[RMDB]
An RNA of 177 nucleotides, treated with DMS and 2A3 and read out base by base. Conditions: 150 mM KOAc, 10 mM MgCl2 and 150 mM bicine (pH 8.5), 24 C.
RNA sequence: GGGAACGACUCGAGUAGAGUCGAAAAGAAGGACAUAACGCGAAGAAGCAGAGAGAAGACUGUAGUGACGCGAAUCACUAGAUGUCAACGACGGCAAGAGAGAGCCGAAGGAGACGAUCCUUAGGAGCCCUAGUCCGGUAUUCGUACCGGACUAGGGAAAAGAAACAACAACAACAAC
Reactivity to DMS in 0.01 (KOAc 150mM, MgCl2 10mM, bicine 150mM(pH8.5), 24C), signal-to-noise 1, nucleotides 027 to 126: g030a110a110g000g000a060c040a000u000a190a120c000g010c000g000a000a050g000a020a250g000c000a050g000a100g020a130g000a090a250g000a020c010u000g000u000a000g000u000g010a100c020g030c060g000a190a210u000c050a020c100u000a060g000a100u080g020u000c000a110a300c110g000a170c000g070g000c020a030a100g000a070g070a030g060a120g110c120c030g000a070a120g000g000a300g000a020c150g000a050u000c000c000u000u000a110g000g000a070g000
Reactivity to 2A3 in 0.01 (KOAc 150mM, MgCl2 10mM, bicine 150mM(pH8.5), 24C), signal-to-noise 2, nucleotides 027 to 126: g000a010a030g080g040a020c060a030u180a150a030c110g000c010g140a170a000g060a210a000g060c020a000g000a000g020a070g010a160a000g150a000c000u080g030u070a060g020u050g050a030c000g010c010g190a000a020u060c080a030c090u060a030g030a080u120g000u000c070a000a000c000g010a000c000g000g040c010a170a000g000a000g030a000g000a090g170c000c000g000a000a000g020g000a000g030a130c140g170a140u030c000c000u000u020a020g060g070a070g060
It was measured as part of the RMDB library OK1LIB.